Chemical mapping of a 177-nucleotide RNA with 2A3 and DMS.
Conditions: 150 mM KOAc, 10 mM MgCl2 and 150 mM bicine (pH 8.5), 24 C.
Values cover nucleotides 27 to 126.

[RMDB]
RNA sequence: GGGAACGACUCGAGUAGAGUCGAAAAAUGAUUCGUAGUGUAAGACGAUCGACAGUCAUCGCUUGCCAGCAGGACCACCAAAGGAAUACGCUUCGGUAACUACUCGAGAUCCCAACCGAUAAAACAACACUCUGUGAACAUUCGUGUUCACAGAGUGAAAAGAAACAACAACAACAAC
Reactivity to 2A3 in 0.01 (KOAc 150mM, MgCl2 10mM, bicine 150mM(pH8.5), 24C), signal-to-noise 4, nucleotides 027 to 126: a000u110g010a030u070u050c060g030u090a100g070u020g040u290a080a060g120a260c010g010a000u030c050g100a090c080a070g080u120c010a020u000c040g020c050u010u020g010c010c020a030g030c030a040g020g080a050c040c020a010c000c030a120a070a070g150g000a030a070u070a070c020g030c020u010u010c020g020g010u050a130a120c010u010a010c010u000c000g000a010g010a050u020c000c020c000a000a000c020c030g090a090u130a290a100a000a030c070a010a010
Reactivity to DMS in 0.01 (KOAc 150mM, MgCl2 10mM, bicine 150mM(pH8.5), 24C), signal-to-noise 1, nucleotides 027 to 126: a040u000g020a080u000u000c020g010u010a050g000u000g030u000a070a130g000a050c060g020a090u000c160g040a090c120a060g020u020c090a080u020c060g020c060u000u000g000c050c000a050g020c090a160g010g010a080c040c160a050c020c020a040a040a130g000g000a030a090u020a020c090g050c150u000u010c010g000g030u020a150a120c010u000a000c000u000c000g020a000g000a050u000c030c000c010a130a090c080c080g000a080u040a150a080a030a150c210a020a060